[RMDB]
RNA sequence: GGGAACGACUCGAGUAGAGUCGAAAAAGAAACACCUCUAUAAGGGAAGUAGAAGGAGCUAUCCAAGGGUUAAAGAAAAGUACCACAGGCAAAGAAUUGAAAAGCCUUCACUGCUGAGCAGCCUCAUGUGUUCUUUUGUUCUGAUUCAUGUACGUUACCUUACCACAAUAUUCGUAUUGUGGUAAGGAAAAGAAACAACAACAACAAC
Reactivity to 2A3 in 0.01 (KOAc 150mM, MgCl2 10mM, bicine 150mM(pH8.5), 24C), signal-to-noise 3, nucleotides 027 to 156: a000g070a010a080a010c040a020c020c030u060c030u060a100u050a300a080g050g010g010a030a020g030u070a020g000a050a010g020g010a070g000c040u060a040u050c040c030a030a010g040g010g040u070u100a120a030a030g070a030a090a010a000g040u030a030c020c040a010c050a040g000g000c030a080a000a100g030a090a110u100u110g040a110a100a040a000g050c010c000u020u060c060a070c080u130g000c020u030g020a010g030c020a010g020c010c000u060c020a050u070g020u000g010u110u040c000u060u040u050u040g060u050u050c030u030g040a090u060u120c050a040u200g010u080a030c010g060u040u050a030
Reactivity to DMS in 0.01 (KOAc 150mM, MgCl2 10mM, bicine 150mM(pH8.5), 24C), signal-to-noise 1, nucleotides 027 to 156: a050g000a260a150a110c010a080c040c000u000c050u000a110u010a080a120g010g000g000a060a130g000u000a050g000a040a030g000g010a110g000c060u000a090u000c010c060a070a120g040g030g030u000u010a030a080a250g000a040a050a090a050g010u020a130c060c040a080c070a030g030g030c020a060a120a140g000a060a120u020u020g010a040a060a050a140g000c020c000u010u000c030a080c070u000g000c080u000g030a110g040c080a020g010c030c020u000c070a020u010g000u000g000u000u000c020u000u000u020u000g030u000u000c030u000g000a120u010u010c040a080u010g040u010a010c070g010u000u020a130